[RMDB]
RNA sequence: GGGAACGACUCGAGUAGAGUCGAAAAGAAAGAAAGAAAGAAACCGUCUCUGCUAGUCUCACGGUUACCACGUUGAAAUCGCAACGAAAGAAGCUCGCACUCAACUUCAACGGCUUAACGAGUGCAAAAAACUUACUGAUCUUCGGAUCAGUAAGAAGUACGUCUAACCGUUCGCGGUUAGACGUACAAAAGAAACAACAACAACAAC
Reactivity to 2A3 in 0.01 (KOAc 150mM, MgCl2 10mM, bicine 150mM(pH8.5), 24C), signal-to-noise 1, nucleotides 027 to 156: g080a000a160a020g100a060a120a030g030a160a130a110g040a050a050a000c020c020g000u000c050u050c020u080g000c080u080a120g090u100c090u000c030a020c020g000g010u000u020a030c040c020a030c020g000u000u000g120a070a100a130u260c110g020c120a050a010c020g010a030a030a020g010a000a000g080c200u240c230g090c040a000c000u030c000a020a030c000u000u010c030a060a000c010g000g000c000u030u040a000a000c040g000a000g010u000g000c000a220a000a000a000a000a000c000u000u000a000c010u000g000a000u000c000u070u070c170g130g000a020u000c000a000g000u000a000a000g000a010a000
The record gives the reactivity of an RNA of 207 nucleotides to 2A3. The RNA was probed in 150 mM KOAc, 10 mM MgCl2 and 150 mM bicine (pH 8.5) at 24 C.